[RMDB]
RNA sequence: GGGAACGACUCGAGUAGAGUCGAAAAAAGGCGAGCGGUACGGGCCUUAUUCAAGACUUAACGAAGGCGGUUAACGGCAUGGGUGAGAUCGUUCCGGUGCAGCGUGACAAAGACAAAGUUACCCGCGCUAUGGAUGCGCAGCCAAUCAUCAAAGGCGUCUCUUAGGCAUUUUCGAAUGCCUAAGAGAAAAAGAAACAACAACAACAAC
Reactivity to 2A3 in 0.01 (KOAc 150mM, MgCl2 10mM, bicine 150mM(pH8.5), 24C), signal-to-noise 2, nucleotides 027 to 156: a000a000g060g000c010g060a100g000c030g000g030u030a010c010g030g040g030c020c000u050u030a090u030u100c040a010a050g050a060c020u090u140a130a020c060g010a010a020g070g010c070g040g020u090u060a060a000c070g040g000c020a060u090g050g010g020u100g030a050g020a030u010c010g020u080u010c000c000g010g010u040g010c070a070g030c010g070u030g010a050c050a080a100a020g060a020c040a050a070a000g040u050u040a070c000c000c000g000c000g000c020u050a070u230g040g000a050u090g030c010g000c010a000g030c000c020a020a120u130c050a010u040c030a070a000a080g030g030c050g050
Reactivity to DMS in 0.01 (KOAc 150mM, MgCl2 10mM, bicine 150mM(pH8.5), 24C), signal-to-noise 1, nucleotides 027 to 156: a090a110g080g010c080g040a120g040c030g030g050u000a040c060g040g020g050c010c000u020u010a040u030u000c050a110a140g010a080c020u010u000a040a140c050g010a080a080g030g020c020g000g030u000u000a060a100c100g060g050c030a160u000g000g000g050u010g000a100g030a050u000c030g030u000u000c040c000g020g000u010g000c070a060g040c100g000u000g000a130c070a050a090a180g000a100c100a030a040a120g020u010u000a160c030c000c000g030c030g000c070u000a260u000g020g010a140u050g000c010g030c030a100g000c030c000a010a180u000c060a100u000c110a030a120a210g020g010c000g000
The record gives the reactivity of an RNA of 207 nucleotides to 2A3 and DMS.
The data come from the RNA Mapping Database (RMDB), library OK3TST.
The DMS profile rests on 1,820 reads.
The reactions ran in a buffer of 150 mM KOAc, 10 mM MgCl2 and 150 mM bicine (pH 8.5), at 24 C.